[RMDB]
RNA sequence: GGGAACGACUCGAGUAGAGUCGAAAACAAGCAAAGCGGGAAUUCCUCCGCUUCCGGGAUUUGACGAAACAGGUGAAUUCGUUGCAGAAGGUAUGGUAGGGCCCAUAUAUCACCCAAUUGACCAAAACGUGAAAGUAUUAUUCGUAAUACUUUCACGAAAAGAAACAACAACAACAAC
Reactivity to DMS in 0.01 (KOAc 150mM, MgCl2 10mM, bicine 150mM(pH8.5), 24C), signal-to-noise 7, nucleotides 027 to 126: c130a100a130g020c130a050a050a020g010c010g010g010g010a070a100u000u000c030c040u000c010c010g010c030u000u000c060c070g010g000g010a160u010u000u010g010a060c040g010a060a060a070c100a090g000g010u000g010a090a140u000u000c050g010u000u000g000c080a080g010a100a060g010g010u000a030u000g000g020u000a090g010g010g010c080c020c020a030u000a060u010a080u010c080a080c010c010c070a070a100u000u000g010a090c100c070a070a060a080a160
Reactivity to 2A3 in 0.01 (KOAc 150mM, MgCl2 10mM, bicine 150mM(pH8.5), 24C), signal-to-noise 6, nucleotides 027 to 126: c040a050a010g110c050a090a040a020g010c020g000g030g060a050a150u180u080c000c010u040c020c000g010c000u030u010c020c010g050g010g030a070u090u070u170g040a030c030g040a020a060a060c060a080g080g020u050g100a060a090u050u030c030g030u050u090g020c020a030g030a170a030g040g020u060a040u080g030g040u060a070g030g020g030c010c010c010a020u060a000u000a010u050c020a070c010c010c000a070a160u110u150g080a100c050c000a040a060a030a050
The record gives the reactivity of an RNA of 177 nucleotides to DMS and 2A3.
For 2A3 the reverse transcriptase was SuperScript II with manganese.
The RNA was probed in 150 mM KOAc, 10 mM MgCl2 and 150 mM bicine (pH 8.5) at 24 C.
It was measured as part of the RMDB library OK2TRN.